[RMDB]
RNA sequence: GGGAACGACUCGAGUAGAGUCGAAAAUCUUCUCUUGGCUGUAGAUCAGAAGCCUCAAAGGAAGCCCAAGGGUCCAAGCAUCUCGCUCUCCUCUCUCUGCUCCCUGCUCACCCUCCCCUCCCAGGCCCGUACAUCUAAUCUUCGGAUUAGAUGUACGAAAAGAAACAACAACAACAAC
Reactivity to DMS in 0.01 (KOAc 150mM, MgCl2 10mM, bicine 150mM(pH8.5), 24C), signal-to-noise 2, nucleotides 027 to 126: u000c070u010u000c030u010c040u000u000g000g020c010u000g020u010a140g000a120u000c100a080g010a110a080g000c010c000u000c130a080a090a170g000g020a050a060g000c020c020c050a110a070g000g000g030u000c030c060a050a140g000c080a060u010c030u010c070g000c020u000c040u000c020c020u010c060u020c020u000c020u020g000c060u010c020c020c030u000g010c040u000c030a180c010c000c000u000c000c000c020c040u000c000c000c010a150g000g000c080c090